[RMDB]
RNA sequence: GGGAACGACUCGAGUAGAGUCGAAAAAUACAUUGAUAUGAGACCAUUUCAAACAGGUAUUCAAUAAAGUAUAGAAUGGUAACAUAUCACCAACUGUGUAAAGAAAAAUAUAUAAACAUAUGAAAUGAUACAUUCUGUGCCUAUGCAAACAUAUGAACAUGGAGGUACCAUUCGUGGUACCUCCAUGAAAAGAAACAACAACAACAAC
Reactivity to 2A3 in 0.01 (KOAc 150mM, MgCl2 10mM, bicine 150mM(pH8.5), 24C), signal-to-noise 1, nucleotides 027 to 156: a000u050a000c120a010u000u130g000a000u000a000u040g030a030g060a000c010c010a000u070u080u080c190a040a030a000c010a010g140g000u100a080u210u180c030a050a040u100a090a130a000g060u050a140u050a130g040a010a010u000g000g000u000a010a000c000a000u030a000u090c030a030c020c000a020a220c030u030g000u040g010u100a110a200a030g030a070a210a030a090a000u190a030u060a000u070a290a190a060c010a000u090a010u010g040a000a200a080u030g040a000u030a130c000a040u060u070c010u180g060u050g000c000c000u020a000u130g010c010a000a080a000c110a040u220a030u280g050a030a000